[RMDB]
RNA sequence: GGGAACGACUCGAGUAGAGUCGAAAAGCUGCUGGGCUAUGGCUUUGCCCUCUAACCAGCGGUCUUGGUCUUGCACACAACGGUAAGCCAGUGGUAAUGUCAGUGCAAGAAGGAUAUUACCAUAGCAAGCAUUUGUCAUCUUCGGAUGACAAAUGCUAAAAGAAACAACAACAACAAC
Reactivity to DMS in 0.01 (KOAc 150mM, MgCl2 10mM, bicine 150mM(pH8.5), 24C), signal-to-noise 1, nucleotides 027 to 126: g000c040u000g000c020u000g030g000g000c060u020a000u030g000g000c000u000u050u000g000c000c000c010u010c020u000a010a000c000c000a050g000c010g000g010u000c020u000u020g010g010u000c000u000u000g020c010a010c000a040c110a140a040c190g000g020u020a030a140g020c040c080a130g010u050g000g000u000a000a000u000g000u020c000a000g000u000g000c010a010a030g000a010a010g010g010a020u000a000u000u000a000c000c000a100u020a110g020c190a100
Reactivity to 2A3 in 0.01 (KOAc 150mM, MgCl2 10mM, bicine 150mM(pH8.5), 24C), signal-to-noise 2, nucleotides 027 to 126: g010c050u020g000c000u010g000g030g130c080u050a030u120g020g030c060u160u120u180g020c000c000c010u000c000u000a000a000c000c000a000g000c060g000g000u040c000u010u110g030g010u000c000u000u030g030c030a000c000a000c020a150a230c140g180g000u150a060a020g040c010c070a100g050u000g020g000u000a000a000u000g010u000c000a000g030u010g110c000a000a030g020a020a020g030g000a000u040a010u000u000a040c050c000a030u020a010g010c100a060
An RNA of 177 nucleotides, treated with DMS and 2A3 and read out base by base.
2A3 adducts were read by reverse transcription with SuperScript II with manganese.
The RNA was probed in 150 mM KOAc, 10 mM MgCl2 and 150 mM bicine (pH 8.5) at 24 C.
It was measured as part of the RMDB libraries RFM100 and RFMREP.
For DMS the reverse transcriptase was MarathonRT.
For 2A3, 1,124 sequencing reads were counted.